[RMDB]
Source: RMDB library M2RFPK, as collected in RNAgym. Chemical mapping of a 207-nucleotide RNA with 2A3. The RNA was probed in 150 mM KOAc, 10 mM MgCl2 and 150 mM bicine (pH 8.5) at 24 C.

RNA sequence: GGGAACGACUCGAGUAGAGUCGAAAAGUUUACGCUCCAAGAUCGGUGGAUAGCAGCCCUAUCAAUAUCUAGGAGAACUGUGCUAUGUUUAGAAGAUUAGGUAGUCUCUAAACAGAACAACUUACCUCAUACGUUAGGACGUUCGCGUCCUAACGAAGAGCCAAGAGUUGUUCGCAACUCUUGGCUCAAAAGAAACAACAACAACAAC
Reactivity to 2A3 in 0.01 (KOAc 150mM, MgCl2 10mM, bicine 150mM(pH8.5), 24C), signal-to-noise 1, nucleotides 027 to 156: g030u100u030u070a010c030g000c020u000c000c000a050a010g040a050u070c110g140g270u170g110g020a040u000a030g050c090a020g040c020c000c000u040a030u030c040a030a020u050a000u120c020u030a060g020g000a020g020a040a060c050u100g040u030g070c090u030a010u060g030u000u030u000a090g000a270a010g000a020u030u050a040g010g210u090a010g030u040c000u000c000u000a000a000a000c000a000g050a030a050c050a020a010c010u060u070a030c020c010u060c040a070u110a230c000g000u000u000a020g000g000a000c020g000u000u040c160g000c030g090u000c000c000u000a010a010c000g000a030a030